[RMDB]
RNA sequence: GGGAACGACUCGAGUAGAGUCGAAAAGAAUAAAGCAGAUGCGGAAAGCUCCAAAGGUAACGCCCUGUAUGUGUGUUUGGAAGAACCCGUAUCAUCACAGGCCCUGAUUGACAUUUGCAGAUUACUACCGUGAUGCAUGAUUCGUCAUGCAUCACGGAAAAGAAACAACAACAACAAC
Reactivity to 2A3 in 0.01 (KOAc 150mM, MgCl2 10mM, bicine 150mM(pH8.5), 24C), signal-to-noise 1, nucleotides 027 to 126: g080a000a100u290a090a060a010g060c040a000g010a040u060g010c000g000g060a080a020a050g010c010u000c040c000a090a000a000g130g030u120a150a000c000g040c020c000c000u000g080u160a230u260g070u010g000u000g050u000u060u000g030g050a020a030g060a150a000c030c000c000g000u050a010u040c000a010u150c020a020c000a000g010g110c010c000c010u050g090a290u060u230g040a040c020a030u000u020u180g010c050a070g000a100u010u120a150c040u040a110
Reactivity to DMS in 0.01 (KOAc 150mM, MgCl2 10mM, bicine 150mM(pH8.5), 24C), signal-to-noise 2, nucleotides 027 to 126: g020a300a050u060a070a090a100g000c080a040g010a010u000g000c060g000g000a070a020a150g000c000u000c000c010a050a020a020g070g000u110a040a090c080g000c050c030c100u000g000u010a070u010g000u000g000u000g040u020u080u010g000g000a080a060g020a000a140c210c000c020g000u010a100u000c020a150u000c020a100c200a120g000g000c000c000c000u000g020a170u040u000g000a070c010a030u010u000u000g000c030a100g000a110u000u030a050c070u000a070
An RNA of 177 nucleotides, treated with 2A3 and DMS and read out base by base. The RNA was probed in 150 mM KOAc, 10 mM MgCl2 and 150 mM bicine (pH 8.5) at 24 C. For 2A3, 1,178 sequencing reads were counted. The DMS profile rests on 1,634 reads. DMS adducts were read by reverse transcription with MarathonRT. It was measured as part of the RMDB library OK1LIB.